This 207-nucleotide RNA was probed chemically with 2A3.
As a SHAPE reagent, 2A3 marks flexible, mostly unpaired nucleotides at the ribose 2'-OH.
The 2A3 profile rests on 317 reads.

[RMDB]
RNA sequence: GGGAACGACUCGAGUAGAGUCGAAAAAGUGCAAUUGGGCUAUAAUUCAGUGGCUAAUAAUAAAGAUGAAAAUGAUUUUGAUGGUUAUUACUUGAGCUUUUCCGCACAAUUUUAAUUAAGUAACUAGUCCGACAGCACCAGCUAACAGCCACCGAUAUCACCUCGAUUGAUUCGUCAAUCGAGGUGAAAAAGAAACAACAACAACAAC
Reactivity to 2A3 in 0.01 (KOAc 150mM, MgCl2 10mM, bicine 150mM(pH8.5), 24C), signal-to-noise 1, nucleotides 027 to 156: a010g010u000g000c000a130a110u080u080g000g000g000c000u010a040u090a300a300u150u040c000a000g000u110g050g050c000u000a000a000u070a100a000u040a040a230a040g070a050u180g130a000a100a210a000u020g020a040u110u090u150u180g090a090u040g000g100u000u140a130u180u020a050c070u020u050g000a000g130c000u000u000u070u000c020c000g010c000a040c020a080a040u170u240u230u170a120a190u180u110a090a000g000u000a110a040c020u020a070g000u070c090c000g000a020c040a050g020c040a040c110c040a040g110c020u070a110a000c020a040g000c000c000a000c000c040g090a040u110a020